[RMDB]
RNA sequence: GGGAACGACUCGAGUAGAGUCGAAAAUAAAUGAGCGUACAGCACACUCAGACUCUACGCUAUCUGAGUGUGUCAACUUCAAAGUCCAACGACACACACAAGGCGUUGGAACAAGAGUGUGAGAAAAUCGAAUACCUAGGUUCGCCUAGGUAUUCGAAAAAGAAACAACAACAACAAC
Reactivity to DMS in 0.01 (KOAc 150mM, MgCl2 10mM, bicine 150mM(pH8.5), 24C), signal-to-noise 2, nucleotides 027 to 126: u020a060a050a080u000g000a110g030c140g000u000a090c200a120g020c000a000c000a000c020u000c000a020g030a070c300u000c040u000a020c090g000c070u000a130u020c030u000g000a050g020u000g030u010g010u000c020a070a050c060u000u000c120a060a080a120g000u000c060c100a030a070c170g000a020c000a070c070a020c070a050c100a060a060g000g000c000g000u010u000g010g000a000a020c060a070a060g010a010g020u000g000u000g000a090g000a040a040a030a090
Reactivity to 2A3 in 0.01 (KOAc 150mM, MgCl2 10mM, bicine 150mM(pH8.5), 24C), signal-to-noise 2, nucleotides 027 to 126: u170a020a090a090u140g100a060g070c060g030u100a040c070a060g030c010a010c000a010c000u020c000a010g040a080c030u030c020u120a060c120g000c070u050a070u080c040u020g000a000g000u000g000u000g000u010c000a010a000c010u150u140c060a080a080a040g020u000c030c040a020a010c080g040a010c000a010c010a000c020a010c000a110a050g030g020c000g040u050u120g040g030a020a000c000a020a010g040a000g030u070g000u010g000a050g090a030a060a010a110

Chemical mapping of a 177-nucleotide RNA with DMS and 2A3. For DMS, 1,507 sequencing reads were counted. Conditions: 150 mM KOAc, 10 mM MgCl2 and 150 mM bicine (pH 8.5), 24 C. 2A3 adducts were read by reverse transcription with SuperScript II with manganese.